[RMDB]
RNA sequence: GGGAACGACUCGAGUAGAGUCGAAAAGGGCCAUGUACCUAUCCAAAAUGAGAUCCCAUCUUGCACACUGUGCUAAUUUGAGAUUCUCAUGCCUCCUACUUGGAGAGAUCUGGACUAGAAGUCAGGGAUGCAUUGUGUUGUUCGCAACACAAUGCAUAAAAGAAACAACAACAACAAC
Reactivity to 2A3 in 0.01 (KOAc 150mM, MgCl2 10mM, bicine 150mM(pH8.5), 24C), signal-to-noise 6, nucleotides 027 to 126: g040g020g000c040c030a060u090g030u050a030c010c000u020a050u050c020c020a070a030a010a070u050g000a000g000a000u010c000c000c000a000u000c000u010u020g000c000a010c010a060c160u290g000u000g050c030u120a030a090u020u020u020g030a030g000a020u300u000c000u010c010a000u030g030c010c000u020c000c020u140a270c120u130u190g010g000a010g000a000g010a050u030c040u060g020g010a010c010u040a040g040a160a010g070u070c020a020g000g010g040
Reactivity to DMS in 0.01 (KOAc 150mM, MgCl2 10mM, bicine 150mM(pH8.5), 24C), signal-to-noise 4, nucleotides 027 to 126: g000g000g010c010c070a070u040g010u020a040c040c000u010a100u000c030c040a040a040a150a010u000g010a010g010a040u000c000c010c000a010u000c030u000u000g000c010a010c020a230c230u030g010u000g000c010u020a010a010u010u000u000g000a040g000a020u010u030c000u000c000a030u010g010c080c030u010c000c000u000a110c190u000u040g030g000a040g000a120g020a090u010c080u000g010g020a040c170u000a050g000a050a110g010u000c020a050g000g000g030